[RMDB]
RNA sequence: GGGAACGACUCGAGUAGAGUCGAAAAGAUAUGGAUUCCGACGAAGUAAAUCGCGAUGAAAUUGCGUAUUGCGAUCGGAAACGAUCGCAAUACGCAAUGGAGCGGAUUACAGAGGAAUCCUAAGUCAUCAUGCUAGUUAGUUCGCUAACUAGCAUGAAAAAGAAACAACAACAACAAC
Reactivity to DMS in 0.01 (KOAc 150mM, MgCl2 10mM, bicine 150mM(pH8.5), 24C), signal-to-noise 2, nucleotides 027 to 126: g010a060u000a300u010g000g000a010u010u000c010c000g010a300c260g000a110a130g010u000a010a010a030u000c000g000c010g000a100u020g010a110a130a030u000u000g010c010g030u010a000u000u000g020c000g000a000u020c000g010g000a100a120a200c000g000a000u000c030g000c000a010a000u000a000c020g000c000a000a000u000g000g000a070g020c020g010g000a050u000u010a000c000a060g010a300g020g010a010a020u010c010c000u010a010a080g010u000c070a170